This 207-nucleotide RNA was probed chemically with DMS and 2A3. For DMS the reverse transcriptase was MarathonRT. It was measured as part of the RMDB library OK3TST. 2A3 adducts were read by reverse transcription with SuperScript II with manganese. The 2A3 profile rests on 3,021 reads. The reactions ran in a buffer of 150 mM KOAc, 10 mM MgCl2 and 150 mM bicine (pH 8.5), at 24 C.
[RMDB]
RNA sequence: GGGAACGACUCGAGUAGAGUCGAAAAAAUCAUUGUUCCAGGUGAUUUGGAUCCUGUUCUGCAUCCUAGCAUAGCCAGUCUGUAUGCAAGAUAAGGAGACCAACUCAGGACAGGCUGAUCUGUUGAAACUGUAAAUUGAGAGUAUCUGUGUAAAGGCCGAUAAAUAGCUUUUCGAAGCUAUUUAUCGAAAAGAAACAACAACAACAAC
Reactivity to DMS in 0.01 (KOAc 150mM, MgCl2 10mM, bicine 150mM(pH8.5), 24C), signal-to-noise 3, nucleotides 027 to 156: a060a050u010c010a080u010u010g000u010u010c040c050a270g050g010u010g030a070u000u000u000g000g020a300u010c020c010u000g000u000u010c000u000g020c050a060u000c030c020u000a090g010c040a170u000a120g010c080c050a120g010u000c030u000g000u000a040u010g020c010a040a040g000a050u020a050a090g020g020a070g010a140c030c030a020a070c060u000c030a050g020g020a070c030a060g020g020c080u000g010a040u000c020u010g010u000u000g010a080a080a070c050u000g010u000a050a050a120u000u000g000a110g020a090g000u000a060u000c010u010g010u010g020u010a050a070a090g010g020c100
Reactivity to 2A3 in 0.01 (KOAc 150mM, MgCl2 10mM, bicine 150mM(pH8.5), 24C), signal-to-noise 5, nucleotides 027 to 156: a000a000u140c060a050u090u060g030u100u020c040c030a030g040g090u070g020a090u050u040u040g010g010a020u030c000c000u020g020u070u080c020u020g010c010a040u020c000c030u070a040g020c020a100u090a080g080c060c070a040g080u070c040u070g010u040a020u020g000c050a090a060g020a090u160a120a030g000g010a020g050a100c020c020a030a050c030u010c030a010g050g020a030c010a020g060g000c060u080g040a090u040c030u030g060u060u050g060a110a070a050c030u070g020u170a040a110a120u110u110g030a050g000a010g050u070a070u050c040u050g030u010g030u080a090a070a090g040g010c080